RNA sequence: GGGAACGACUCGAGUAGAGUCGAAAACUUGUCCAUCAUUCCAAGCAGCAUACACGCUUUUGGCUUGCACAACCUUGGAUCCGGCGAUGUUGAAGUUGGAUGAGGGCGAAGGGUGGUACCGCUGGAGGGUGCCAAGAAAAUUCGUUUUCUUGGCACCAAAAGAAACAACAACAACAAC
Reactivity to 2A3 in 0.01 (KOAc 150mM, MgCl2 10mM, bicine 150mM(pH8.5), 24C), signal-to-noise 5, nucleotides 027 to 126: c020u030u050g000u000c030c020a180u030c020a050u140u020c010c010a060a050g020c000a070g010c010a040u090a090c070a040c100g030c010u090u070u090u170g070g000c030u040u100g000c060a030c040a090a100c050c040u060u090g090g030a030u010c000c020g000g000c010g080a080u050g020u050u040g080a130a100g030u020u030g000g010a020u050g020a060g030g000g000c050g020a020a040g030g020g010u030g000g020u060a060c010c020g020c040u020g010g040a040g040
Reactivity to DMS in 0.01 (KOAc 150mM, MgCl2 10mM, bicine 150mM(pH8.5), 24C), signal-to-noise 3, nucleotides 027 to 126: c030u040u000g010u010c030c010a100u000c030a050u020u000c020c030a060a090g010c020a080g000c130a120u000a070c100a300c170g030c040u000u020u020u010g040g000c050u000u020g000c120a040c140a110a060c130c090u030u010g000g020a090u040c030c010g000g000c040g030a090u060g050u010u000g000a060a110g010u000u010g000g030a060u000g020a090g000g000g000c010g000a050a090g010g010g060u000g000g020u010a040c050c030g000c010u020g030g010a160g010

Chemical mapping of a 177-nucleotide RNA with 2A3 and DMS. The 2A3 profile rests on 3,405 reads. Conditions: 150 mM KOAc, 10 mM MgCl2 and 150 mM bicine (pH 8.5), 24 C. The DMS profile rests on 4,289 reads.